[RMDB]
RNA sequence: GGGAACGACUCGAGUAGAGUCGAAAAUUGGACAUCGGAAAUAGCAAUCAGCUUUCUCAGGGAGAACAGACGGUAUACUCCUCGAUCAAAUGGAAAACACAGCGCACGGACUCCUCCUCCAGCGACUUCGAGGACAUCGAGGAGGUGAGCCGGCAGACAAGUAAUCCGUUUUCGAACGGAUUACUUGAAAAGAAACAACAACAACAAC
Reactivity to 2A3 in 0.01 (KOAc 150mM, MgCl2 10mM, bicine 150mM(pH8.5), 24C), signal-to-noise 4, nucleotides 027 to 156: u080u050g040g010a010c030a050u030c070g050g030a030a060a040u080a080g000c040a020a080u110c060a040g030c040u030u080u010c050u020c050a040g000g020g040a040g010a060a030c030a040g100a070c030g020g010u030a030u050a120c020u010c020c000u020c020g010a040u050c030a010a060a150u100g100g010a020a050a070a010c100a010c020a040g060c080g010c070a080c110g000g020a030c030u020c010c010u010c000c010u000c020c020a040g060c030g120a090c050u150u170c110g040a050g010g050a020c010a050u070c040g000a010g000g000a010g000g000u010g010a030g040c000c000g010g000c010a000g040a030
Reactivity to DMS in 0.01 (KOAc 150mM, MgCl2 10mM, bicine 150mM(pH8.5), 24C), signal-to-noise 2, nucleotides 027 to 156: u000u010g020g030a090c050a080u000c050g000g020a010a100a160u010a080g020c010a110a100u000c100a180g000c070u000u000u000c010u000c030a180g030g000g020a120g000a060a100c040a090g010a090c080g020g040u000a110u000a120c020u000c010c010u000c050g030a040u010c080a080a090a150u000g010g000a030a030a040a090c050a050c030a090g000c110g010c020a070c030g030g000a120c040u000c000c020u000c010c010u010c010c050a100g000c050g020a110c100u000u000c060g000a120g010g010a170c080a070u010c060g000a060g030g020a040g040g010u000g010a110g040c050c020g020g040c010a140g000a090